[RMDB]
RNA sequence: GGGAACGACUCGAGUAGAGUCGAAAAGUGAGGAGGUCGAGGCCGGGCCUGAGACCGGUGUAUAAGCGCCUCCCUCAGCCUGCGCUUAUACUCAGGGAUACUCAGGCUAUCCCUGCCAUGGCUGAGACUUGAGUUCUGAAUUCGUUCAGGAUUCAAGAAAAGAAACAACAACAACAAC
Reactivity to 2A3 in 0.01 (KOAc 150mM, MgCl2 10mM, bicine 150mM(pH8.5), 24C), signal-to-noise 3, nucleotides 027 to 126: g090u070g030a080g030g040a030g010g020u050c020g020a030g050g000c000c000g010g010g000c000c000u010g000a010g010a040c010c010g000g000u010g000u000a030u000a000a010g010c000g000c010c020u050c030c010c000u030c010a020g000c000c010u020g000c000g000c000u010u010a010u010a020c020u020c040a030g000g000g060a030u050a090c010u010c020a010g000g000c010u010a020u010c000c000c000u010g010c000c000a060u060g010g000c000u010g000a000g000a020
Reactivity to DMS in 0.01 (KOAc 150mM, MgCl2 10mM, bicine 150mM(pH8.5), 24C), signal-to-noise 9, nucleotides 027 to 126: g010u010g000a110g010g010a110g010g010u000c030g010a190g000g000c020c050g010g000g000c010c010u000g000a040g010a180c010c010g000g010u000g000u000a010u000a020a020g000c010g010c010c170u010c070c050c020u000c050a050g010c050c040u000g000c010g000c000u000u000a010u000a020c020u000c040a040g010g000g000a100u000a050c010u000c030a030g000g000c120u000a020u000c010c010c000u000g010c000c000a100u010g010g010c010u000g000a190g000a250